About this RNA: This 177-nucleotide RNA was probed chemically with DMS and 2A3. For 2A3 the reverse transcriptase was SuperScript II with manganese.
RNA sequence: GGGAACGACUCGAGUAGAGUCGAAAAAGCAUUUAAAGCGGUUGACAAUUUCAGGAAGAGGAAAAAGAAGGUUGAAGAAAGGGAUGUAGUAAGUAAGUAUAAAUAUAGACCGGAGAAAUACGCCGGUCUCGUCUUCGUAUUUCGAUACGAAGACGAGAAAAGAAACAACAACAACAAC
Reactivity to DMS in 0.01 (KOAc 150mM, MgCl2 10mM, bicine 150mM(pH8.5), 24C), signal-to-noise 3, nucleotides 027 to 126: a060g050c030a080u010u010u020a070a080a110g020c050g010g000u000u010g010a070c070a120a100u020u000u000c080a080g000g010a070a040g010a050g010g010a040a060a050a110a090g000a030a060g000g000u000u020g010a060a060g010a040a030a040g010g010g010a040u010g000u010a020g000u000a040a050g010u020a040a050g010u020a080u000a040a080a070u040a120u050a080g000a020c010c000g000g000a040g000a080a090a080u040a050c150g000c000c000g010g000u010
Reactivity to 2A3 in 0.01 (KOAc 150mM, MgCl2 10mM, bicine 150mM(pH8.5), 24C), signal-to-noise 3, nucleotides 027 to 126: a000g020c030a030u100u130u270a130a060a020g030c030g000g010u000u110g020a070c060a120a100u010u110u160c020a020g060g000a000a030g030a020g030g070a020a050a020a000a020g070a040a000g080g040u100u090g030a050a030g050a050a070a040g060g000g000a050u070g030u030a010g050u050a120a030g020u000a000a100g040u000a060u080a150a200a000u250a050u080a050g000a000c000c000g040g000a030g060a020a090a020u110a040c060g030c000c000g010g000u000